[RMDB]
RNA sequence: GGGAACGACUCGAGUAGAGUCGAAAAAUUGAUGCGAAGGGGCGACGGAGAAGGCUAUGUUGGCCGGGCGACGGUUGUCCCGGUUUAAGCGUGUAGGCUGGUUUUCCAGGCAAAUCCGGAAAUUGAACGUAAGUUUCACGUUCGCGUGAAACUUACGAAAAGAAACAACAACAACAAC
Reactivity to DMS in 0.01 (KOAc 150mM, MgCl2 10mM, bicine 150mM(pH8.5), 24C), signal-to-noise 2, nucleotides 027 to 126: a060u000u000g010a030u010g000c010g020a080a090g000g030g000g020c030g000a040c060g030g010a080g020a300a150g020g000c020u000a060u020g010u000u010g000g000c020c010g010g010g030c300g000a070c100g020g000u000u000g020u000c010c000c020g020g000u000u020u000a030a120g010c020g000u000g030u010a060g010g000c000u000g000g000u000u000u000u000c010c020a240g000g000c060a020a060a100u010c020c020g000g010a060a040a160u020u010g010a070a130
Chemical mapping of a 177-nucleotide RNA with DMS.
The DMS profile rests on 1,121 reads.
The RNA was probed in 150 mM KOAc, 10 mM MgCl2 and 150 mM bicine (pH 8.5) at 24 C.